[RMDB]
Annotation
Structure probing data (2A3 and DMS) for a 207-nucleotide construct. For DMS, 2,276 sequencing reads were counted. For 2A3 the reverse transcriptase was SuperScript II with manganese. The RNA was probed in 150 mM KOAc, 10 mM MgCl2 and 150 mM bicine (pH 8.5) at 24 C.

RNA sequence: GGGAACGACUCGAGUAGAGUCGAAAACGGAAGCAUUAAAACCAUUCGAGCUAGUCAAUGCGUGCCGUGUCUCUCCGCAGCGUGUUGGCGAAUGUAAAGAGUGACUAAGCAUGUAGUACCGAGGAUGAUAAGAGCAAUUCGUUCGCGAAUUGCUCAACGCUCUACAUACGUUCGCGUAUGUAGAGCGAAAAGAAACAACAACAACAAC
Reactivity to 2A3 in 0.01 (KOAc 150mM, MgCl2 10mM, bicine 150mM(pH8.5), 24C), signal-to-noise 4, nucleotides 027 to 156: c030g000g030a040a010g040c020a020u090u080a060a030a000a050c050c000a020u070u050c060g000a030g050c060u120a040g060u060c040a000a030u020g010c010g030u040g000c010c010g030u000g050u050c020u000c010u010c090c050g000c010a040g020c030g000u040g010u090u090g040g000c010g020a070a010u080g010u090a070a060a020g030a010g010u030g030a020c030u030a020a030g030c020a080u050g010u070a070g020u040a070c040c020g030a060g040g020a020u110g010a020u090a200a120g000a000g000c000a000a000u000u000c000g030u010u060c140g000c010g110a000a010u000u000g000c000u000c000a000a000
Reactivity to DMS in 0.01 (KOAc 150mM, MgCl2 10mM, bicine 150mM(pH8.5), 24C), signal-to-noise 1, nucleotides 027 to 156: c050g000g020a120a190g010c050a110u010u000a080a120a070a190c010c000a110u000u000c000g000a220g050c050u000a130g000u000c080a040a050u000g020c000g080u010g010c040c070g010u000g000u020c060u000c030u020c040c020g020c050a120g000c020g070u000g010u000u010g000g000c030g010a090a100u010g000u020a060a070a100g010a080g020u000g000a060c050u000a060a140g040c020a060u000g020u010a110g030u010a060c070c030g010a110g010g000a060u010g000a160u010a080a120g010a030g000c020a040a110u000u000c000g030u010u000c150g000c010g000a020a030u020u000g010c000u000c000a020a090